An RNA of 177 nucleotides, treated with DMS and 2A3 and read out base by base. DMS adducts were read by reverse transcription with MarathonRT. The reactions ran in a buffer of 150 mM KOAc, 10 mM MgCl2 and 150 mM bicine (pH 8.5), at 24 C. Reactivities are given for positions 27 through 126.
RNA sequence: GGGAACGACUCGAGUAGAGUCGAAAAGUCCCGGAGUUCGCUCCGGGACAAAGAACCUCAAAUUCACGCAAACUUCCGCGUCAUCGCGAGGAAACGAGGAAAAAAUCACGGAGUUCGCUCCGUGAAACGACUAUUAGUACUUCGGUACUAAUAGUCGAAAAGAAACAACAACAACAAC
Reactivity to DMS in 0.01 (KOAc 150mM, MgCl2 10mM, bicine 150mM(pH8.5), 24C), signal-to-noise 3, nucleotides 027 to 126: g000u000c010c010c010g010g050a020g020u000u010c250g020c020u000c000c000g030g000g000a000c010a010a040a100g000a130a110c010c000u010c060a060a140a140u000u000c040a060c040g000c090a070a100a170c110u000u000c070c030g000c020g010u000c190a130u010c070g010c040g000a080g000g010a050a070a140c130g000a020g020g020a000a050a070a120a090a100u010c000a010c010g000g000a010g010u000u010c280g000c000u000c000c000g010u000g000a000a030a090
Reactivity to 2A3 in 0.01 (KOAc 150mM, MgCl2 10mM, bicine 150mM(pH8.5), 24C), signal-to-noise 4, nucleotides 027 to 126: g000u000c000c020c020g000g020a010g000u100u160c130g000c120u010c010c010g000g000g000a000c000a000a010a000g010a020a040c000c000u030c020a080a080a070u110u070c030a020c050g060c020a060a150a150c090u160u070c080c040g050c020g160u130c060a150u250c030g010c000g020a050g010g030a030a030a030c080g000a070g000g000a040a060a030a030a010a070u030c000a010c000g010g010a000g000u070u080c100g080c100u020c010c000g000u000g000a010a000a000